[RMDB]
RNA sequence: GGGAACGACUCGAGUAGAGUCGAAAAUCUGCGCGUCCGGCCUGGAGGCCGUCAACACCGCCGCGCAGAAGGUGCGUUCGGGCUGGGAUGACCUGGUGCUGGCCGGCGGCGUGGAGUCGAUGAGCCGGAUCCCCACUUAGUUCGCUAAGUGGGGAUCAAAAGAAACAACAACAACAAC
Reactivity to 2A3 in 0.01 (KOAc 150mM, MgCl2 10mM, bicine 150mM(pH8.5), 24C), signal-to-noise 2, nucleotides 027 to 126: u000c000u020g000c020g000c030g130u070c010c030g000g020c020c010u150g160g000a130g190g040c040c000g040u030c010a030a040c030a000c130c000g010c020c020g000c000g040c020a020g030a030a050g130g130u080g000c010g040u060u190c170g120g010g010c090u260g000g050g010a030u040g000a030c030c100u050g060g000u110g110c060u020g050g010c020c000g000g020c010g040g000c000g000u020g010g040a040g000u090c060g130a210u200g100a040g090c000c030g050
Reactivity to DMS in 0.01 (KOAc 150mM, MgCl2 10mM, bicine 150mM(pH8.5), 24C), signal-to-noise 2, nucleotides 027 to 126: u000c000u000g000c010g020c010g000u000c020c000g020g020c000c010u010g010g020a120g020g020c010c000g020u010c030a080a070c100a200c000c010g000c300c000g000c010g020c020a060g000a050a110g030g010u000g020c010g010u010u000c090g020g000g020c150u010g050g010g010a090u000g000a020c020c050u010g010g030u000g010c040u000g030g010c020c020g000g020c020g000g010c000g010u000g010g000a030g010u010c040g010a110u000g000a100g040c020c010g000
The data come from the RNA Mapping Database (RMDB), library OK2TRN.
This 177-nucleotide RNA was probed chemically with 2A3 and DMS.
DMS adducts were read by reverse transcription with MarathonRT.
The 2A3 profile rests on 1,642 reads.